[RMDB]
RNA sequence: GGGAACGACUCGAGUAGAGUCGAAAACGGGAACAAGGCAUGCUUAAGAACUAAGUUGAGCAAUUCAGGUCUUGGAAACAAGACCUGAAUAGAUGAAUAGUUCUUCAUCUAAUGCCUUGUUCUCAAGGGUACGGUUACAUUUCGAUGUGACCGUACCAAAAGAAACAACAACAACAAC
Reactivity to DMS in 0.01 (KOAc 150mM, MgCl2 10mM, bicine 150mM(pH8.5), 24C), signal-to-noise 5, nucleotides 027 to 126: c150g010g000g000a010a000c010a000a020g000g000c000a010u000g010c220u010u010a030a030g000a040a060c070u020a030a090g020u020u020g010a090g030c070a130a050u000u010c010a010g000g010u000c000u000u010g000g000a090a090a160c000a000a000g000a010c000c000u000g000a000a000u000a040g010a060u000g000a090a040u010a030g010u020u010c030u000u010c090a010u010c050u030a140a030u010g000c000c000u000u000g000u000u000c000u000c000a050a060g000
Reactivity to 2A3 in 0.01 (KOAc 150mM, MgCl2 10mM, bicine 150mM(pH8.5), 24C), signal-to-noise 9, nucleotides 027 to 126: c050g000g000g000a000a000c000a000a000g010g000c000a000u030g010c010u060u060a060a020g020a030a020c060u100a110a110g140u100u140g110a050g070c040a030a040u000u000c000a000g000g000u000c000u000u000g010g000a010a020a020c000a000a000g000a000c000c000u000g000a000a000u000a000g000a010u070g020a030a070u040a070g020u030u010c000u000u000c010a010u010c030u100a090a000u010g000c000c000u000u000g000u000u000c000u000c000a000a000g010